[RMDB]
RNA sequence: GGGAACGACUCGAGUAGAGUCGAAAACUAAUACGGAUUCGUCCGUAUUAGCUGAGCACCAGUGGUCUAGUGGUAGAAUAGUACCCUGCCACGGUACAGACCCGGGUUCGAUUCCCGGCUGGUGCACCACGAGGUAAGAGGGGUUCGCCCCUCUUACACCUGCUAAAAGUUUCGACUUUUAGCAGGUAAAAGAAACAACAACAACAAC
Reactivity to DMS in 0.01 (KOAc 150mM, MgCl2 10mM, bicine 150mM(pH8.5), 24C), signal-to-noise 3, nucleotides 027 to 156: c010u000a010a000u000a010c020g030g010a040u000u000c300g020u010c000c010g040u000a010u000u000a010g010c000u000g000a180g020c020a010c010c020a100g000u000g010g020u000c030u000a060g010u020g040g000u010a040g010a070a160u000a160g020u000a300c090c030c030u000g010c120c050a030c040g010g040u000a060c110a120g000a020c060c000c030g040g000g040u000u030c070g010a300u020u000c000c000c040g020g000c050u020g020g000u000g000c010a040c010c020a060c130g040a150g000g000u010a020a010g000a040g010g000g050g030u000u010c300g020c000c010c020c000u000c000u000u010a010c010
Chemical mapping of a 207-nucleotide RNA with DMS. The DMS profile rests on 3,719 reads. The reactions ran in a buffer of 150 mM KOAc, 10 mM MgCl2 and 150 mM bicine (pH 8.5), at 24 C. It was measured as part of the RMDB library ARCHII.